An RNA of 177 nucleotides, treated with DMS and read out base by base. Reactivities are given for positions 27 through 126. It was measured as part of the RMDB library OK2TRN. For DMS the reverse transcriptase was MarathonRT. For DMS, 1,044 sequencing reads were counted. The reactions ran in a buffer of 150 mM KOAc, 10 mM MgCl2 and 150 mM bicine (pH 8.5), at 24 C.

RNA sequence: GGGAACGACUCGAGUAGAGUCGAAAAAGAAUUCAUCUCUUUAUGUUGACUCUAAAAUGAUUUUAGUAGUUAUUAAGGACAGUAGUAAUGCUUGGAGAUUGGCUAAAUUUUCUCCUGAAAAUUUAGAUACCAGAAGAUCUUUCGAGAUCUUCUGGUAAAAAGAAACAACAACAACAAC
Reactivity to DMS in 0.01 (KOAc 150mM, MgCl2 10mM, bicine 150mM(pH8.5), 24C), signal-to-noise 1, nucleotides 027 to 126: a060g000a100a060u020u020c060a100u000c060u000c010u000u000u000a040u000g010u000u000g010a000c030u000c000u000a010a020a030a220u030g010a100u010u000u000u000a030g010u010a030g000u020u020a050u000u020a090a080g020g010a050c110a050g010u000a030g010u020a040a110u000g000c030u010u000g000g020a100g000a070u000u020g030g010c000u000a000a010a000u000u000u000u000c030u000c180c200u010g000a030a000a020a010u000u000u000a020g000a250